[RMDB]
RNA sequence: GGGAACGACUCGAGUAGAGUCGAAAAUGUCAUAGUCAACGUCCGGCUCCCCCGUCUGUACGCUGGCGCUCUCCGGACCACCUUAAUACCAGCUACAGAGAAACUGACACAUCGUCAAUAAUGCGUGGACUACUAGUGCUUUCGAGCACUAGUAGUCAAAAGAAACAACAACAACAAC
Reactivity to DMS in 0.01 (KOAc 150mM, MgCl2 10mM, bicine 150mM(pH8.5), 24C), signal-to-noise 2, nucleotides 027 to 126: u010g020u010c070a090u030a060g000u000c060a080a150c120g000u000c050c030g000g010c090u000c020c030c000c050c050g000u000c010u010g000u000a010c220g020c000u000g040g000c130g050c160u000c040u000c030c100g000g000a090c090c070a060c090c050u030u010a030a070u010a070c070c010a020g000c010u000a000c040a010g030a060g010a010a060a090c180u000g000a030c050a100c170a070u010c090g020u000c010a070a180u020a020a060u000g030c100g010u010g040
Reactivity to 2A3 in 0.01 (KOAc 150mM, MgCl2 10mM, bicine 150mM(pH8.5), 24C), signal-to-noise 1, nucleotides 027 to 126: u070g020u020c030a070u090a090g030u050c060a030a090c100g140u020c050c020g020g020c010u000c000c040c010c010c000g080u000c010u010g000u010a000c030g050c000u000g000g050c070g010c050u030c000u020c020c010g070g000a020c040c000a030c020c020u220u160a230a070u140a120c010c000a000g000c000u000a010c030a000g000a000g010a070a100a000c050u050g010a010c020a040c000a180u100c000g000u010c070a030a070u210a190a020u130g050c060g060u160g060
An RNA of 177 nucleotides, treated with DMS and 2A3 and read out base by base. DMS adducts were read by reverse transcription with MarathonRT. Conditions: 150 mM KOAc, 10 mM MgCl2 and 150 mM bicine (pH 8.5), 24 C. The data come from the RNA Mapping Database (RMDB), library OK2TST. The DMS profile rests on 1,056 reads. Reactivities are given for positions 27 through 126.